[RMDB]
RNA sequence: GGGAACGACUCGAGUAGAGUCGAAAACCCUGGUUCGCCAGGGAAAAAAGCGUACUACUUCCUUUUGACGACAAAGAACUACCCACCAAUUCCCAAAUAGGAAUUGAGGUUCGAUGUCGAUAAGGAAGUAUCGCAAAAACUACAGUUCGCUGUAGAACGUGUUUACAUGGUUCGCCAUGUAAACACGAAAAGAAACAACAACAACAAC
Reactivity to DMS in 0.01 (KOAc 150mM, MgCl2 10mM, bicine 150mM(pH8.5), 24C), signal-to-noise 2, nucleotides 027 to 156: c010c000c000u000g000g000u000u030c300g020c020c010a010g000g000g030a000a000a090a100a070a040g000c020g030u000a060c140u020a020c010u000u000c000c000u000u000u000u000g040a300c070g060a010c010a010a130a300g000a020a030c010u000a030c000c010c010a300c120c000a000a040u000u010c000c000c020a100a180a130u010a040g000g010a040a030u000u000g010a130g100g050u000u000c000g060a300u000g030u000c000g020a110u000a000a030g010g020a060a000g000u000a000u020c010g000c040a070a030a050a140a070c000u010a020c040a090g020u000u010c270g020c050u000g050u000a060g000a060a140
Reactivity to 2A3 in 0.01 (KOAc 150mM, MgCl2 10mM, bicine 150mM(pH8.5), 24C), signal-to-noise 3, nucleotides 027 to 156: c000c000c000u000g000g060u040u080c160g090c030c030a040g000g050g000a020a010a060a050a000a060g040c040g040u090a090c080u010a000c000u020u020c010c000u070u040u050u160g280a150c040g000a000c000a000a020a010g000a000a000c000u060a080c090c100c020a020c030c000a000a000u010u010c010c000c020a160a300a230u240a100g000g000a010a000u000u000g000a020g000g010u000u000c000g000a010u040g000u010c010g000a010u030a000a000g000g000a000a000g000u000a010u020c000g000c010a000a010a000a050a100c010u010a000c010a010g020u050u090c160g090c090u030g010u020a010g010a050a020